[RMDB]
RNA sequence: GGGAACGACUCGAGUAGAGUCGAAAAGCGAGGGCAGUGAAUUUGGACCUGUACGCUACUCAAUUGGUUACGCAUUCCGAGGUGGCAACAAGGAUACAAUGCUUCAGCUGCAUAGCUCGGAAACCUCCGAGUGAGCACUAUUCGUAGUGCUCACUCGAAAAGAAACAACAACAACAAC
Reactivity to 2A3 in 0.01 (KOAc 150mM, MgCl2 10mM, bicine 150mM(pH8.5), 24C), signal-to-noise 6, nucleotides 027 to 126: g030c010g020a020g040g030g000c010a010g030u040g110a080a100u070u030u080g030g040a050c000c000u000g010u040a030c060g000c010u020a030c020u030c050a050a230u060u070g030g030u100u130a130c130g010c110a100u090u000c040c030g000a040g000g050u010g000g020c010a010a030c020a060a080g030g010a030u140a250c060a060a030u140g070c030u050u050c030a050g020c010u000g000c010a050u090a080g050c000u000c010g000g000a020a080a060c000c040u040c030
Reactivity to DMS in 0.01 (KOAc 150mM, MgCl2 10mM, bicine 150mM(pH8.5), 24C), signal-to-noise 3, nucleotides 027 to 126: g020c010g010a100g020g000g010c030a020g060u010g000a010a040u020u010u000g000g060a110c040c000u000g000u030a190c210g000c000u010a070c000u000c040a100a120u000u020g000g010u000u030a110c300g000c070a070u010u030c130c090g000a060g000g020u000g000g000c000a100a030c140a100a070g000g000a040u020a170c120a040a040u010g000c120u030u020c070a090g020c000u000g000c030a060u040a140g000c000u010c080g000g000a090a040a110c070c000u000c050
The record gives the reactivity of an RNA of 177 nucleotides to 2A3 and DMS.
2A3 adducts were read by reverse transcription with SuperScript II with manganese.
It was measured as part of the RMDB library OK1LIB.
Conditions: 150 mM KOAc, 10 mM MgCl2 and 150 mM bicine (pH 8.5), 24 C.
The DMS profile rests on 3,636 reads.
High DMS reactivity at an A or C suggests that its Watson-Crick edge is free.